[RMDB]
RNA sequence: GGGAACGACUCGAGUAGAGUCGAAAAUUUUGAAUCACAUUUUGAAUAUAUAUGAAUUUUACAUGAUUUUCAACAUCAAAAUCAGUCAAUCAAGCAAUCAUGAACUUUUCUGCAUCCAGUCGCACUCUGUUCCAGCCAGAUGCUGCAUCAGUAACAACCGUCAUCCAUUAUUCGUAAUGGAUGACGGAAAAGAAACAACAACAACAAC
Reactivity to 2A3 in 0.01 (KOAc 150mM, MgCl2 10mM, bicine 150mM(pH8.5), 24C), signal-to-noise 2, nucleotides 027 to 156: u050u030u010u090g060a010a010u160c020a020c020a070u070u110u070u060g050a190a060u120a060u070a030u050a140u190g030a070a180u080u020u080u210a040c080a080u040g030a050u070u030u100u160c100a090a090c050a160u090c070a000a130a030a000u020c010a000g100u010c040a050a060u030c000a020a130g070c000a030a070u090c000a030u090g050a090a070c070u060u030u070u080c020u020g010c000a060u020c030c010a010g060u010c030g000c010a010c030u030c040u050g050u110u040c010c050a020g020c020c000a030g010a070u020g010c030u040g060c060a040u040c000a070g070u050a000a070c020a060a000